[RMDB]
RNA sequence: GGGAACGACUCGAGUAGAGUCGAAAACGGCAUUUCCCCAGCAGCCAUGACCUACCAGGCUGCGGUGCGGCUCGCCGCACAGGUCAUCCCUCAUCGGGCGCGUCCUGCGUCAUUCCACGCCAACCCAAGACCAUUGCUUCCUUCGGGAAGCAAUGAAGAUUGUAACUUAGUUCGCUAAGUUACAAUCAAAAGAAACAACAACAACAAC
Reactivity to DMS in 0.01 (KOAc 150mM, MgCl2 10mM, bicine 150mM(pH8.5), 24C), signal-to-noise 2, nucleotides 027 to 156: c040g020g000c050a220u000u000u010c020c000c010c050a120g020c010a030g000c000c000a170u020g000a110c070c020u000a130c110c070a130g010g020c020u010g020c020g020g010u010g030c000g020g100c020u010c210g060c010c040g000c030a090c030a040g030g020u000c030a110u000c020c000c000u010c070a120u010c090g000g010g010c040g000c070g010u020c020c040u000g030c090g030u000c060a080u010u000c020c010a080c040g000c020c020a120a110c010c010c020a090a160g010a170c120c010a020u010u000g010c000u000u000c000c010u000u010c300g060g000g010a020a010g000c000a000a000u000g000a070a130
Reactivity to 2A3 in 0.01 (KOAc 150mM, MgCl2 10mM, bicine 150mM(pH8.5), 24C), signal-to-noise 7, nucleotides 027 to 156: c040g070g000c050a080u040u040u050c030c020c000c020a050g010c000a000g000c000c010a160u150g030a050c010c020u110a190c090c070a010g010g000c010u000g010c010g000g000u010g000c000g000g000c050u100c140g140c010c000g000c000a000c010a000g020g000u020c010a100u080c000c020c000u090c030a120u120c080g020g010g000c030g000c010g040u110c020c060u110g010c000g040u040c020a060u110u050c040c020a060c060g020c010c020a040a050c030c010c010a040a010g050a040c040c000a000u000u000g000c000u010u000c000c000u030u060c070g060g000g000a000a000g000c000a000a000u000g000a010a010
The record gives the reactivity of an RNA of 207 nucleotides to DMS and 2A3.
The DMS profile rests on 5,774 reads.
In probing experiments dimethyl sulfate is read out at A N1 and C N3, which are open when not base-paired.